Structure probing data (DMS and 2A3) for a 177-nucleotide construct.
Conditions: 150 mM KOAc, 10 mM MgCl2 and 150 mM bicine (pH 8.5), 24 C.
For 2A3 the reverse transcriptase was SuperScript II with manganese.
For DMS, 2,958 sequencing reads were counted.
The data come from the RNA Mapping Database (RMDB), library OK1LIB.
[RMDB]
RNA sequence: GGGAACGACUCGAGUAGAGUCGAAAACGGGUAUAGCGUCGUGGACAGUCAUUCAUCCUGUCGCCCUGUAAAAGCAAAAACCCGCCAGCUUACACUGACGGGGUUUAUGAAGAGAUGAAACUGACCGCAUCCCGAUGGGAUUCGUCCCAUCGGGAUGAAAAGAAACAACAACAACAAC
Reactivity to DMS in 0.01 (KOAc 150mM, MgCl2 10mM, bicine 150mM(pH8.5), 24C), signal-to-noise 2, nucleotides 027 to 126: c020g030g000g010u030a020u020a070g000c050g000u010c060g010u060g000g010a130c020a010g050u000c130a070u000u020c020a000u010c040c040u000g020u020c110g010c010c040c010u030g010u040a020a020a090a160g000c120a010a040a000a070a060c000c000c000g010c010c010a010g040c020u010u090a140c210a140c010u000g000a030c000g000g010g000g030u020u010u000a060u020g000a160a090g030a050g020a030u010g000a030a070a070c070u010g020a060c080c090g070
Reactivity to 2A3 in 0.01 (KOAc 150mM, MgCl2 10mM, bicine 150mM(pH8.5), 24C), signal-to-noise 4, nucleotides 027 to 126: c030g000g080g080u100a150u080a150g120c050g040u050c050g040u130g060g000a060c030a000g020u030c030a050u030u000c000a010u030c000c010u050g080u090c030g040c030c000c000u030g050u120a060a110a070a070g030c070a040a060a010a030a080c000c000c000g000c000c000a000g000c010u120u040a070c070a000c060u020g010a000c000g000g010g000g000u020u130u040a110u080g100a090a060g060a020g010a080u040g020a010a040a080c040u070g050a080c000c030g010